[RMDB]
RNA sequence: GGGAACGACUCGAGUAGAGUCGAAAAAAAAGAUAUGGACGACUGCCAUCGGCUGGUGAGGAUAGCUCGGAAACGAGCUAUCUACCCACCACCAGAACUACCGAGGCGGAGUCGUCCUAAGUCAAAACAUUAAUAAUGUGUUCGCACAUUAUUAAUGAAAAGAAACAACAACAACAAC
Reactivity to 2A3 in 0.01 (KOAc 150mM, MgCl2 10mM, bicine 150mM(pH8.5), 24C), signal-to-noise 3, nucleotides 027 to 126: a000a000a030a120g030a020u050a010u060g000g000a000c000g000a000c020u110g090c080c040a300u090c020g050g000c030u000g010g020u010g000a000g000g000a000u000a010g000c000u020c010g000g000a010a010a000c000g000a000g000c000u010a000u000c000u000a010c010c010c000a010c010c000a010c010c000a010g010a070a030c270u300a060c110c000g040a020g040g000c090g000g050a020g030u020c000g000u000c000c000u000a010a000g000u000c000a070a030a070a090
Reactivity to DMS in 0.01 (KOAc 150mM, MgCl2 10mM, bicine 150mM(pH8.5), 24C), signal-to-noise 7, nucleotides 027 to 126: a070a060a100a140g000a020u010a050u010g000g000a020c000g020a010c010u010g010c000c010a180u000c000g020g000c030u000g000g010u000g000a120g020g010a010u000a010g020c000u010c000g010g000a020a010a050c000g010a010g020c010u000a000u000c000u000a030c030c020c060a300c020c000a000c010c010a010g000a040a030c080u020a300c070c020g020a060g000g020c050g010g010a050g030u000c000g020u000c000c000u000a000a050g000u000c020a100a080a080a160
Overview:
An RNA of 177 nucleotides, treated with 2A3 and DMS and read out base by base. The reactions ran in a buffer of 150 mM KOAc, 10 mM MgCl2 and 150 mM bicine (pH 8.5), at 24 C. 2A3 adducts were read by reverse transcription with SuperScript II with manganese. DMS adducts were read by reverse transcription with MarathonRT.